An RNA of 207 nucleotides, treated with 2A3 and read out base by base. For 2A3 the reverse transcriptase was SuperScript II with manganese. For 2A3, 551 sequencing reads were counted.
RNA sequence: GGGAACGACUCGAGUAGAGUCGAAAAUUCAUGGAGACCAUUUCUUUGGCCUUCCUGGGCUCCUCUGCACAAUCAGCCUGCAGAGUGGCUCCAUGGUGUCCAAACAGCCUAUUGAAAUCUAUGGCCCUGUAGGGCUUCGGGACUUUAUCUGGCGAAAGGUCCUAUUACGGUUCGCCGUAAUAGGACCAAAAGAAACAACAACAACAAC
Reactivity to 2A3 in 0.01 (KOAc 150mM, MgCl2 10mM, bicine 150mM(pH8.5), 24C), signal-to-noise 2, nucleotides 027 to 156: u100u040c020a020u090g010g010a010g180a200c020c040a090u110u250u010c070u180u100u050g030g000c000c010u100u160c160c110u120g000g000g030c010u090c060c030u000c000u000g030c000a020c040a060a300u290c040a030g080c030c000u030g020c000a000g000a000g020u000g020g000c010u060c020c000a030u080g030g000u040g050u000c000c000a000a090a090c030a020g000c010c000u170a170u090u160g060a080a060a010u060c050u050a100u130g010g000c000c020c020u050g210u150a250g000g030g040c000u040u080c080g080g000g000a000c000u010u180u000a150u060c090u010g050g020c000g090a080a040a080